The record gives the reactivity of an RNA of 177 nucleotides to 2A3. Values cover nucleotides 27 to 126. The 2A3 profile rests on 681 reads. The reactions ran in a buffer of 150 mM KOAc, 10 mM MgCl2 and 150 mM bicine (pH 8.5), at 24 C.
[RMDB]
RNA sequence: GGGAACGACUCGAGUAGAGUCGAAAAGGACGGCGAUGUUAUCGCUCAUUGAGCAUUCUGUGAGAAGUACGACUCGCUUGGGCUGCUUAGUAGUGACAUAGUCGGACAUCGCUGCUGUGGAGCCUGCCGGGUGGCAGGUCUUCGGACCUGCCACCCGAAAAGAAACAACAACAACAAC
Reactivity to 2A3 in 0.01 (KOAc 150mM, MgCl2 10mM, bicine 150mM(pH8.5), 24C), signal-to-noise 2, nucleotides 027 to 126: g060g010a080c030g030g090c020g050a050u070g020u100u090a150u210c060g020c010u000c000a070u060u130g000a000g000c050a090u200u030c070u050g030u030g000a010g000a260a070g050u180a030c090g030a010c090u000c020g000c000u020u010g050g000g000c000u090g000c000u040u070a000g030u000a010g010u080g010a000c020a160u260a040g090u220c060g000g000a000c060a000u010c000g000c060u000g000c040u020g090u100g020g050a010g030c000c000u000g040c070